RNA sequence: GGGAACGACUCGAGUAGAGUCGAAAAGAUAUGGAUAUUGCUAGCCUCGGUUCGGAAACGAACCAGAGGCUUGGACCAAUGAUCCUAAGUCAAAAGUCUGGAUAAUUGUUCGCAAUUAUCCAGACAACCAUAGGAUAUACUUCGGUAUAUCCUAUGGAAAAGAAACAACAACAACAAC
Reactivity to DMS in 0.01 (KOAc 150mM, MgCl2 10mM, bicine 150mM(pH8.5), 24C), signal-to-noise 6, nucleotides 027 to 126: g000a050u010a300u010g000g000a020u000a030u000u000g010c030u000a040g010c000c000u000c000g000g000u000u000c000g000g000a090a070a220c000g010a010a000c000c000a030g020a000g010g010c010u000u000g000g000a130c300c030a010a010u000g000a030u000c000c000u000a060a190g010u010c050a070a100a120a120g010u000c000u010g000g000a010u000a010a000u000u000g000u010u010c230g010c000a020a000u000u000a000u000c000c000a000g000a000c010a020a070
Reactivity to 2A3 in 0.01 (KOAc 150mM, MgCl2 10mM, bicine 150mM(pH8.5), 24C), signal-to-noise 4, nucleotides 027 to 126: g030a020u090a040u190g000g000a000u010a020u050u040g020c030u020a000g000c000c010u000c000g000g010u000u010c000g030g020a120a070a070c020g010a000a000c040c090a050g000a000g010g000c010u010u040g010g030a010c040c030a010a010u090g080a020u050c000c010u050a150a070g080u050c050a050a040a140a130g000u000c000u010g000g010a010u000a010a000u010u020g030u080u100c280g000c130a000a000u000u000a000u000c020c000a010g000a000c000a000a000